RNA sequence: GGGAACGACUCGAGUAGAGUCGAAAAGAUUCGAGGCCCCGAGCGCUGACAUGGGCGCAGAGGCCAGUACUCUUCGGAGUACAGGUUUCAAACGAGGCCUUGAGUGAGAUCGUGAAAGUUCGCCGUCCUAGCGGUUCUACUUCGGUAGAACCGCUAGAAAAGAAACAACAACAACAAC
Reactivity to 2A3 in 0.01 (KOAc 150mM, MgCl2 10mM, bicine 150mM(pH8.5), 24C), signal-to-noise 2, nucleotides 027 to 126: g030a000u030u030c010g030a010g040g000c030c030c000c000g000a090g030c010g020c000u060g130a200c070a300u140g150g020g000c000g000c020a000g000a000g000g010c010c000a000g030u000a000c000u000c020u030u100c170g240g000a000g000u000a000c000a000g030g000u000u000u040c100a140a130a050c040g020a030g000g000c000c000u000u000g010a000g040u040g030a040g000a000u090c060g020u060g280a030a080a150g010u020u030c030g030c150c020g050u060c000

The record gives the reactivity of an RNA of 177 nucleotides to 2A3. For 2A3, 857 sequencing reads were counted. Values cover nucleotides 27 to 126. The data come from the RNA Mapping Database (RMDB), library RFM100. The RNA was probed in 150 mM KOAc, 10 mM MgCl2 and 150 mM bicine (pH 8.5) at 24 C.